[RMDB]
This 177-nucleotide RNA was probed chemically with 2A3. The data come from the RNA Mapping Database (RMDB), library RFM100. For 2A3 the reverse transcriptase was SuperScript II with manganese.
RNA sequence: GGGAACGACUCGAGUAGAGUCGAAAAUUUGCCCUGGUCAUUGAUAGUGCAGGGAGAGGAAUCAAUGAAAGCGCUUCCCCGUGUUUGAAGGGUCCACUCCUAUCCCUUCCAAACUCUGGAGCUUUCGGGCUUAAAACCCUUUCGAGGGUUUUAAGCCAAAAGAAACAACAACAACAAC
Reactivity to 2A3 in 0.01 (KOAc 150mM, MgCl2 10mM, bicine 150mM(pH8.5), 24C), signal-to-noise 1, nucleotides 027 to 126: u110u110u240g000c000c000c050u010g070g000u210c010a040u030u100g130a060u250a120g070u070g010c000a020g000g000g050a100g040a040g050g140a050a050u120c040a070a040u100g040a050a000a000g030c100g000c170u150u120c040c000c000c000g000u010g030u000u010u030g040a000a000g040g040g040u090c090c050a260c070u010c000c000u010a130u120c010c000c030u050u000c100c010a000a050a000c020u040c100u090g000g040a010g010c000u010u010u000c000g040